Chemical mapping of a 207-nucleotide RNA with 2A3 and DMS. 2A3 adducts were read by reverse transcription with SuperScript II with manganese.

[RMDB]
RNA sequence: GGGAACGACUCGAGUAGAGUCGAAAAAGAUGGCAGGUUCACACCGUACGGUGCGGAAGUUCGCGCUUCCGUGAAACGCGAAAAUCGGACGGUGGCUGCAAGUCGCAUCGCAAAACCGCGGCAAGUGUUAACCUGGACCUCUUCGGAGGUCCAGGAACAUACAGUUUAAGUUCGCUUAAACUGUAUGAAAAGAAACAACAACAACAAC
Reactivity to 2A3 in 0.01 (KOAc 150mM, MgCl2 10mM, bicine 150mM(pH8.5), 24C), signal-to-noise 4, nucleotides 027 to 156: a000g110a040u150g070g000c020a010g010g040u200u200c070a060c000a000c070c000g000u010a000c000g000g000u030g010c000g000g010a010a010g020u110u230c080g010c030g000c090u010u000c010c000g010u030g040a120a100a010c140g010c020g060a060a040a000a000u020c000g000g000a000c000g000g030u010g030g000c010u010g000c030a040a020g020u020c010g010c050a060u050c040g020c140a050a070a040a060c060c090g010c000g010g000c030a060a080g030u020g050u240u100a050a050c000c000u010g000g000a000c000c000u020c000u030u040c120g080g000a000g000g010u000c000c000a000g000g000a000a000
Reactivity to DMS in 0.01 (KOAc 150mM, MgCl2 10mM, bicine 150mM(pH8.5), 24C), signal-to-noise 2, nucleotides 027 to 156: a120g000a080u000g000g010c000a040g030g010u000u000c240a090c000a040c000c000g030u000a030c060g010g010u000g030c030g040g020a090a050g040u000u000c290g020c280g030c000u000u010c040c120g040u010g000a040a020a050c050g000c020g000a070a040a190a030u000c010g020g000a030c000g020g010u010g010g000c040u010g050c030a110a100g020u000c050g000c030a110u000c050g030c080a090a050a110a120c050c100g010c010g000g020c050a070a100g030u000g000u000u000a050a130c000c000u000g000g010a020c000c000u000c010u000u010c270g030g000a010g000g010u010c020c000a000g000g000a000a060
The 2A3 profile rests on 4,124 reads. For DMS, 4,436 sequencing reads were counted. Source: RMDB library M2RFPK, as collected in RNAgym. Values are in units of 0.01, from 0 to 300, in steps of 10.